[RMDB]
RNA sequence: GGGAACGACUCGAGUAGAGUCGAAAACAUCACAGGAGUAAGUGAUGCAGCAGUUUAGGCCCAGAUCAUAGGUCAAGACUUCAAUAAACAUUUGUAUAGGGAUUGUCGUCCCUUCAUCUGGUACAGAAUUUUUAAUAACAGCCUCAUAGCCCUGUGAAUCAUCAUACGCCUUCGGGCGUAUGAUGAUAAAAGAAACAACAACAACAAC
Reactivity to 2A3 in 0.01 (KOAc 150mM, MgCl2 10mM, bicine 150mM(pH8.5), 24C), signal-to-noise 1, nucleotides 027 to 156: c000a050u050c020a000c060a010g040g050a060g090u130a230a010g010u020g020a000u000g010c020a000g060c010a010g010u080u130u220a040g000g000c010c010c030a020g050a080u060c020a020u100a110g060g000u010c000a010a010g020a040c020u040u000c090a070a040u090a160a120a000c020a040u080u170u150g110u160a090u180a110g000g000g030a060u000u230g100u110c090g010u010c010c000c060u020u000c000a010u000c040u020g080g050u080a040c020a020g060a000a000u030u070u140u100u110a050a080u120a140a040c040a020g010c000c000u070c040a040u010a010g020c010c000c040u050g020u010g080a030